Structure probing data (2A3 and DMS) for a 177-nucleotide construct.
For DMS the reverse transcriptase was MarathonRT.
The RNA was probed in 150 mM KOAc, 10 mM MgCl2 and 150 mM bicine (pH 8.5) at 24 C.
As a SHAPE reagent, 2A3 marks flexible, mostly unpaired nucleotides at the ribose 2'-OH.
Reactivities are given for positions 27 through 126.
RNA sequence: GGGAACGACUCGAGUAGAGUCGAAAAUAAACACUGUUAAAUUUUGUGACCACAUGGUCAAGGCUGGUUUAGUCGGUGUGCUCACACUAGACAACCAGGACCUUAAUGGCAAGUGGUAUGAUUUUGGCCUAUCCAUUCCGUUCGCGGAAUGGAUAGGAAAAGAAACAACAACAACAAC
Reactivity to 2A3 in 0.01 (KOAc 150mM, MgCl2 10mM, bicine 150mM(pH8.5), 24C), signal-to-noise 2, nucleotides 027 to 126: u130a040a080a000c010a010c040u080g050u140u140a100a140a140u090u110u150u090g120u070g050a000c000c010a010c010a030u280g060g000u010c010a000a000g000g000c000u040g000g040u040u030u170a050g000u030c020g030g030u040g010u050g060c060u100c050a010c000a000c000u060a080g000a000c000a000a010c000c000a010g000g010a050c000c020u040u020a130a030u180g000g040c000a010a070g000u010g020g020u030a050u070g090a060u030u040u000u060g030g010
Reactivity to DMS in 0.01 (KOAc 150mM, MgCl2 10mM, bicine 150mM(pH8.5), 24C), signal-to-noise 1, nucleotides 027 to 126: u010a080a080a090c140a070c030u010g000u000u000a050a110a080u000u000u010u010g000u010g010a030c010c000a030c010a040u010g010g010u000c000a030a020g000g020c000u010g010g000u000u000u000a070g010u010c010g010g000u000g010u000g030c300u000c250a080c000a000c000u000a040g020a000c050a090a010c010c000a000g000g010a060c010c000u020u000a050a060u010g020g000c020a030a010g030u030g000g010u000a030u000g000a080u000u000u000u000g020g000